[RMDB]
RNA sequence: GGGAACGACUCGAGUAGAGUCGAAAAGUGCAUCGUUCAUCCUCACACCCAUCAAAGGGAUAGAGCUGUUUCCCUUCGGCUCCUUGUGAAUGGACACUGUCGCCACAAGAGUGAACUUGUAGUUCGCCGACUCCAUGGGAUUCGUCCCAUGGAGUCGAAAAGAAACAACAACAACAAC
Reactivity to 2A3 in 0.01 (KOAc 150mM, MgCl2 10mM, bicine 150mM(pH8.5), 24C), signal-to-noise 5, nucleotides 027 to 126: g110u100g010c030a070u080c100g050u050u040c000a030u050c020c020u010c010a040c010a030c010c010c010a080u230c190a140a120a110g030g000g020a050u100a070g040a020g020c020u050g070u010u060u090c000c030c000u020u110c020g010g000c010u000c000c040u060u070g020u020g080a150a110u070g070g000a020c050a040c120u100g050u080c020g040c080c010a070c020a070a020g080a010g080u030g030a040a020c040u080u190g150u180a060g000u020u010c000g000c030
Reactivity to DMS in 0.01 (KOAc 150mM, MgCl2 10mM, bicine 150mM(pH8.5), 24C), signal-to-noise 2, nucleotides 027 to 126: g030u000g000c050a010u000c010g060u010u020c010a080u000c080c020u000c020a130c020a090c000c020c000a080u020c190a090a100a190g030g030g010a120u030a110g000a050g000c040u000g000u000u010u000c010c000c030u000u030c050g000g000c010u000c010c100u040u000g030u010g020a070a050u040g000g000a080c000a060c010u010g000u000c070g020c010c010a050c130a060a090g000a170g020u000g020a000a000c000u000u040g050u040a150g000u000u000c000g010c010

Structure probing data (2A3 and DMS) for a 177-nucleotide construct. The RNA was probed in 150 mM KOAc, 10 mM MgCl2 and 150 mM bicine (pH 8.5) at 24 C. For DMS the reverse transcriptase was MarathonRT.